[RMDB]
RNA sequence: GGGAACGACUCGAGUAGAGUCGAAAAGAUGACGACGGGUUAUCCGGCGGUCGACGCACGGUCAUGCACCCCCGAUCCGUCGCCCCCUCCACCCCGCGGAUUCCGGUCUCGACCGGUAGCCGUAUUGUUUUCGAUUGUUAUUCGUAACAAUCGAAAAAAAAGAAACAACAACAACAAC
Reactivity to 2A3 in 0.01 (KOAc 150mM, MgCl2 10mM, bicine 150mM(pH8.5), 24C), signal-to-noise 8, nucleotides 027 to 126: g080a050u140g040a030c020g000a010c010g030g020g020u090u120a060u100c040c020g010g020c040g010g040u090c070g040a060c020g040c060a130c100g090g030u060c030a050u140g050c060a060c000c000c000c010c000g000a020u020c000c000g000u000c000g010c000c000c000c000c000u000c010c010a050c010c010c010c020g000c000g000g000a010u050u000c000c000g000g000u000c050u060c160g110a050c000c000g000g000u010a020g000c010c000g030u030a160u040u210g080
Reactivity to DMS in 0.01 (KOAc 150mM, MgCl2 10mM, bicine 150mM(pH8.5), 24C), signal-to-noise 5, nucleotides 027 to 126: g020a100u010g010a080c020g020a050c040g000g000g000u000u020a080u030c030c040g020g000c120g000g000u010c130g000a130c060g010c060a080c090g010g000u010c100a070u030g010c130a180c010c020c010c010c030g010a030u010c020c010g000u000c030g000c000c010c020c010c000u010c000c010a170c020c020c020c060g000c000g000g000a120u000u010c010c000g000g020u000c050u040c300g000a040c000c000g000g010u010a020g000c010c000g010u000a080u010u010g000